[RMDB]
RNA sequence: GGGAACGACUCGAGUAGAGUCGAAAAAGAGUCCUACGAAGAAGAUGUAGCCCAUCACUUCGGCCUCCAGCGGAGGGGCGACUGCGGUAACAACGUCGUCUUGAGCGUCCGUGCGGAGGGUCAAGCAAUAUGCUACCGCAUUCGUGCGGUAGCAUAUAAAAGAAACAACAACAACAAC
Reactivity to 2A3 in 0.01 (KOAc 150mM, MgCl2 10mM, bicine 150mM(pH8.5), 24C), signal-to-noise 3, nucleotides 027 to 126: a000g130a030g070u010c010c000u020a040c010g010a000a010g000a060a030g000a010u010g010u160a030g020c000c030c010a000u010c000a010c000u000u010c000g030g020c000c000u010c000c000a010g000c000g010g000a020g020g020g000g000c000g000a000c000u020g000c030g080g040u220a080a050c010a030a000c030g010u010c000g000u000c000u040u070g070a060g070c110g130u020c000c000g000u010g030c210g010g000a000g010g000g000u080c050a040a010g020c040a020
Reactivity to DMS in 0.01 (KOAc 150mM, MgCl2 10mM, bicine 150mM(pH8.5), 24C), signal-to-noise 4, nucleotides 027 to 126: a130g000a250g000u000c010c010u010a020c030g000a030a000g000a090a060g080a020u000g010u020a300g020c220c190c000a020u000c000a220c010u000u000c000g010g000c000c010u010c030c000a300g000c010g000g000a130g000g000g010g000c030g010a010c000u000g000c300g000g010u060a090a120c000a020a300c170g030u000c000g000u000c020u000u010g000a230g010c160g000u000c020c000g000u000g000c070g000g000a010g000g000g020u040c160a020a100g000c170a100
About this RNA:
The record gives the reactivity of an RNA of 177 nucleotides to 2A3 and DMS. DMS adducts were read by reverse transcription with MarathonRT. The RNA was probed in 150 mM KOAc, 10 mM MgCl2 and 150 mM bicine (pH 8.5) at 24 C. The 2A3 profile rests on 2,865 reads. High 2A3 reactivity points to a flexible backbone, as in loops and unpaired stretches. High DMS reactivity at an A or C suggests that its Watson-Crick edge is free.